RNA sequence: GGGAACGACUCGAGUAGAGUCGAAAAACUCACGCGAAAGUCCCGCUUCUAGUUCAUUUUUCAAAUCUUCUAUUCAAAAUUUUGCUCAUAAUUUGAAUAAGAGGUUUGAGAAUUGAACUAGAAGCGGCGGAGUGGCAUUAUUCGUAAUGCCACUCCGAAAAGAAACAACAACAACAAC
Reactivity to 2A3 in 0.01 (KOAc 150mM, MgCl2 10mM, bicine 150mM(pH8.5), 24C), signal-to-noise 2, nucleotides 027 to 126: a010c020u030c030a070c040g200c010g130a180a050a030g050u050c010c000c000g000c010u000u000c000u000a000g000u000u000c000a010u020u000u000u000u000c000a000a000a020u000c000u110u010c000u050a010u010u010c000a060a070a140a210u060u160u110u200g100c090u070c080a090u110a220a090u000u000u010g010a000a000u040a100a050g020a010g000g000u010u000u000g000a000g000a010a000u010u000g000a000a000c000u000a000g000a000a000g000c000g000g010